RNA sequence: GGGAACGACUCGAGUAGAGUCGAAAAUCCUAAGUCUUUCGAGUAUACAAUGACGGGUGAUUGUCAGAUACCUCGGAAACGAGGUAUCUUGGAUUUAUCACCUAAGACAGUAUACUUGAAAGAUAUGGAAAAAGGCUAUAUCUUCGGAUAUAGCCAACCAUGGCAUAAACUUCGGUUUAUGCCAUGGAAAAGAAACAACAACAACAAC
Reactivity to DMS in 0.01 (KOAc 150mM, MgCl2 10mM, bicine 150mM(pH8.5), 24C), signal-to-noise 1, nucleotides 027 to 156: u000c000c000u000a130a300g000u000c000u000u000u020c020g030a020g020u010a000u000a030c000a120a200u000g010a190c300g050g000g030u000g000a030u000u020g000u020c010a040g000a030u000a020c010c000u030c020g020g010a180a140a300c020g060a050g020g020u000a000u000c010u020u010g040g000a020u000u010u000a010u010c000a000c000c000u000a000a080g020a210c070a110g060u010a010u000a000c030u000u000g000a070a000a000g000a020u000a010u010g000g010a060a110a080a110a090g000g050c010u010a010u000a000u000c000u020u010c300g020g000a030u020a000u000a030g000c010c000a020a050
Reactivity to 2A3 in 0.01 (KOAc 150mM, MgCl2 10mM, bicine 150mM(pH8.5), 24C), signal-to-noise 4, nucleotides 027 to 156: u010c020c000u050a130a060g030u000c010u000u000u000c010g020a000g000u010a000u000a010c100a240a300u160g070a060c070g000g000g030u010g010a010u010u020g020u020c000a000g010a010u000a000c010c000u000c010g040g030a070a080a040c020g000a000g000g000u000a000u000c000u000u060g000g000a000u050u040u070a040u010c000a000c000c000u010a010a010g050a040c020a000g010u000a000u000a010c000u000u000g000a000a000a000g010a000u050a050u040g010g010a050a080a070a050a040g000g000c000u010a000u010a010u010c020u030u090c300g030g000a000u000a000u000a000g010c000c000a000a010
Description:
An RNA of 207 nucleotides, treated with DMS and 2A3 and read out base by base. The reactions ran in a buffer of 150 mM KOAc, 10 mM MgCl2 and 150 mM bicine (pH 8.5), at 24 C. Source: RMDB library RNAMAK, as collected in RNAgym.